Record summary:
Chemical mapping of a 177-nucleotide RNA with 2A3 and DMS. For DMS the reverse transcriptase was MarathonRT. Values cover nucleotides 27 to 126. It was measured as part of the RMDB library OK1LIB. The RNA was probed in 150 mM KOAc, 10 mM MgCl2 and 150 mM bicine (pH 8.5) at 24 C.
RNA sequence: GGGAACGACUCGAGUAGAGUCGAAAAGUUACAGCCAGAGUCAAAGAGCCCCAGACACGGAGAAAGAGGAGUGUCAGGGUGAAUGAUAGGCCUCGACGCCGGAGGGGGAGGGAUAGGAGGAGAAGAGUCAUGGAGUGGGGUUCGCCCCACUCCAUGAAAAAGAAACAACAACAACAAC
Reactivity to 2A3 in 0.01 (KOAc 150mM, MgCl2 10mM, bicine 150mM(pH8.5), 24C), signal-to-noise 2, nucleotides 027 to 126: g080u100u080a040c010a030g030c010c010a000g010a000g050u040c030a210a060a080g160a060g000c000c000c000c030a040g020a000c030a000c020g220g020a040g100a170a110a000g120a080g120g070a110g010u000g030u030c010a000g140g000g000u060g070a050a090u110g020a010u010a030g130g020c000c020u050c080g050a120c160g050c050c040g010g000a240g070g000g000g030g070a090g040g000g010a010u120a080g100g020a100g000g050a000g010a180a000g000a120g060
Reactivity to DMS in 0.01 (KOAc 150mM, MgCl2 10mM, bicine 150mM(pH8.5), 24C), signal-to-noise 1, nucleotides 027 to 126: g000u010u000a050c250a090g010c030c010a130g000a130g010u000c010a040a060a070g010a300g000c010c000c010c060a120g000a060c010a020c020g010g010a150g060a010a070a120g020a170g040g000a110g000u000g010u020c060a260g000g000g040u020g000a110a090u000g000a020u010a080g000g000c000c010u030c100g000a120c020g050c070c040g000g000a110g000g000g000g000g000a100g000g000g000a020u000a110g010g010a030g000g010a020g000a020a010g010a100g060